[RMDB]
This 177-nucleotide RNA was probed chemically with DMS and 2A3. DMS adducts were read by reverse transcription with MarathonRT.
RNA sequence: GGGAACGACUCGAGUAGAGUCGAAAAAAGAUAUGGAUCAUAUACAAAGCGUGAACUACGCUCGGGUUCGCUCGGAAACGAGCGAAUCUCUAGCGUGGCGCACGCAAAAAGUAUGAUCCUAAGUCAACUAUAACGUAUAGUUCGCUAUACGUUAUAGAAAAGAAACAACAACAACAAC
Reactivity to DMS in 0.01 (KOAc 150mM, MgCl2 10mM, bicine 150mM(pH8.5), 24C), signal-to-noise 9, nucleotides 027 to 126: a100a060g010a030u010a300u010g000g000a010u000c000a010u000a010u000a100c200a120a170a180g000c000g020u000g000a090a050c010u000a000c000g000c000u010c300g010g000g010u000u000c000g010c000u000c000g010g000a100a090a190c010g010a010g010c000g010a000a000u000c000u010c030u000a020g010c000g030u000g000g020c300g000c010a000c000g010c000a000a020a080a120a080g000u000a000u000g000a010u000c000c000u000a030a070g010u000c030a090a190
Reactivity to 2A3 in 0.01 (KOAc 150mM, MgCl2 10mM, bicine 150mM(pH8.5), 24C), signal-to-noise 3, nucleotides 027 to 126: a010a010g070a040u080a040u120g000g000a000u010c010a000u030a010u020a140c180a060a170a010g000c000g010u010g000a070a020c000u010a000c010g000c000u010c010g000g010g000u010u000c010g010c000u010c000g040g020a090a070a060c010g000a000g000c010g000a010a000u010c000u000c000u010a000g000c000g000u000g000g000c050g020c010a000c000g000c010a020a010a000a020a000g010u000a010u010g000a000u000c000c000u000a110a020g030u010c010a020a040